Description
Structure probing data (DMS and 2A3) for a 207-nucleotide construct. DMS adducts were read by reverse transcription with MarathonRT. The 2A3 profile rests on 3,465 reads. Conditions: 150 mM KOAc, 10 mM MgCl2 and 150 mM bicine (pH 8.5), 24 C. For 2A3 the reverse transcriptase was SuperScript II with manganese.
[RMDB]
RNA sequence: GGGAACGACUCGAGUAGAGUCGAAAAGAAUUGGUAUGUAAGCUACUUCUUCCUGUAGCUGCGUCAUAACAUCAAGGUUAUGCAUACUGAGCCGAAGCUCAGCUUCGGUCCUCCAAGGAAGACCAAAUACAGCUCAGCCCGUUCGCGGGCUGAGCAACAUGAAUUGCAUGUUCGCAUGCAAUUCAUGAAAAGAAACAACAACAACAAC
Reactivity to DMS in 0.01 (KOAc 150mM, MgCl2 10mM, bicine 150mM(pH8.5), 24C), signal-to-noise 2, nucleotides 027 to 156: g010a070a120u010u010g010g080u010a030u000g010u000a300a300g000c010u000a000c010u000u000c010u000u000c010c000u000g020u000a030g010c000u010g000c030g030u020c030a020u000a000a020c060a300u000c240a140a170g040g010u000u000a020u000g000c000a050u000a010c020u000g020a090g000c000c010g000a040a010g010c010u000c190a200g000c000u020u000c000g020g010u000c040c030u000c080c110a060a090g000g000a020a010g020a110c290c040a000a040a120u000a060c090a090g010c000u000c000a000g010c000c010c020g000u000u000c300g000c040g050g020g040c010u000g000a000g020c040a010a020
Reactivity to 2A3 in 0.01 (KOAc 150mM, MgCl2 10mM, bicine 150mM(pH8.5), 24C), signal-to-noise 3, nucleotides 027 to 156: g110a000a080u020u010g000g000u010a010u000g000u000a000a000g010c000u000a000c000u070u080c000u000u000c000c000u000g000u000a000g010c000u000g000c010g000u010c000a000u000a000a010c010a080u260c190a090a000g300g000u000u000a000u010g000c010a000u000a000c000u000g000a000g000c000c000g010a000a000g000c050u080c300a050g000c020u030u000c000g010g000u020c010c000u070c040c030a020a010g000g000a000a000g010a000c020c060a010a050a040u210a090c090a030g000c000u020c000a000g000c000c000c020g050u110u100c180g020c030g090g000g000c010u000g000a000g000c000a000a000